[RMDB]
RNA sequence: GGGAACGACUCGAGUAGAGUCGAAAACGCAAAGCUGCAGCGCGGCGCUCUGGAGGCCGUGCCCCGCGCACUGCUCUUUACAUGGCCCGACGUGAGGGCACUUCGCGGGCAGUGCUGCGGCCUCGUGAAACUGCCCCUAAGUUCGCUUAGGGGCAAAACUCACUGUAUGUUUCGACAUACAGUGAGUAAAAGAAACAACAACAACAAC
Reactivity to 2A3 in 0.01 (KOAc 150mM, MgCl2 10mM, bicine 150mM(pH8.5), 24C), signal-to-noise 2, nucleotides 027 to 156: c080g010c050a100a080a070g040c020u080g030c040a080g070c030g000c020g100g000c040g000c050u080c120u140g150g000a030g000g020c000c010g000u030g020c000c040c000c000g020c000g000c000a000c000u010g000c000u030c010u090u180u160a110c080a130u180g070g000c020c000c020g030a110c100g040u130g130a170g020g030g010c050a080c020u050u090c070g010c050g000g010g000c000a020g000u000g010c020u020g000c020g000g000c000c000u000c000g030u010g010a050a040a050c070u050g020c000c000c010c000u000a000a000g000u030u090c120g050c090u000u000a000g000g000g000g000c000a000a000a000
Reactivity to DMS in 0.01 (KOAc 150mM, MgCl2 10mM, bicine 150mM(pH8.5), 24C), signal-to-noise 2, nucleotides 027 to 156: c050g030c020a070a090a070g020c020u010g020c020a100g050c110g030c010g060g020c020g040c100u010c060u000g020g030a060g020g030c010c070g020u000g010c030c010c000c060g050c090g000c010a010c000u000g000c000u000c010u000u000u000a120c030a090u000g000g040c010c020c000g010a270c170g040u020g000a200g000g010g040c000a030c010u000u010c060g020c300g000g030g040c010a080g050u000g000c000u020g000c000g040g020c030c020u040c090g000u000g000a080a060a140c070u010g000c000c020c020c000u000a030a050g000u000u000c300g040c000u000u000a030g050g000g000g030c000a010a010a010

The data come from the RNA Mapping Database (RMDB), library M2RFOK. The record gives the reactivity of an RNA of 207 nucleotides to 2A3 and DMS. The RNA was probed in 150 mM KOAc, 10 mM MgCl2 and 150 mM bicine (pH 8.5) at 24 C. High DMS reactivity at an A or C suggests that its Watson-Crick edge is free. For 2A3 the reverse transcriptase was SuperScript II with manganese.